[RMDB]
RNA sequence: GGGAACGACUCGAGUAGAGUCGAAAAGGGCUUGAGCCAUCGCCCGAAUAAGAUGGAUGAUACAAGUCGACAUGGUACGCGACGUAGAACGUACUCAUUGAAGUGCGAAAGCACGAAGUCCGACGUGUCUGGGACGAUCAUCAGGCAAGACUUAGAAAUAAUAUGAGUACUUCGGUACUCAUAUUAUAAAAGAAACAACAACAACAAC
Reactivity to 2A3 in 0.01 (KOAc 150mM, MgCl2 10mM, bicine 150mM(pH8.5), 24C), signal-to-noise 8, nucleotides 027 to 156: g020g000g010c020u070u110g060a020g010c010c010a040u070c030g020c000c010c010g030a060a130u200a090a040g060a060u120g040g010a010u020g010a010u060a110c080a120a080g020u020c010g010a020c010a010u060g060g020u150a060c010g030c100g030a030c030g010u030a020g030a080a010c000g000u020a010c010u020c060a130u090u300g100a170a010g000u010g000c000g040a130a050a020g060c060a020c110g030a060a010g020u020c020c020g000a020c020g030u010g010u000c030u070g050g030g020a010c020g000a020u030c010a010u010c010a010g020g030c030a050a040g020a070c030u050u110a050g080a060a160
Reactivity to DMS in 0.01 (KOAc 150mM, MgCl2 10mM, bicine 150mM(pH8.5), 24C), signal-to-noise 5, nucleotides 027 to 156: g020g020g030c040u000u000g010a090g020c040c030a090u000c040g000c020c020c020g020a090a130u000a060a130g010a150u000g010g010a070u000g010a090u000a060c050a050a100g020u000c030g020a070c020a140u000g020g000u010a030c030g050c020g010a280c110g000u000a140g020a090a080c010g010u000a020c010u000c080a170u000u000g010a120a160g000u000g000c020g000a090a070a200g010c030a050c010g010a080a120g000u000c010c020g020a050c020g020u000g010u000c010u010g020g010g010a070c030g000a050u000c020a080u000c020a070g010g010c040a070a070g000a070c020u000u000a100g010a090a100

Annotation:
An RNA of 207 nucleotides, treated with 2A3 and DMS and read out base by base. The DMS profile rests on 17,545 reads. Conditions: 150 mM KOAc, 10 mM MgCl2 and 150 mM bicine (pH 8.5), 24 C.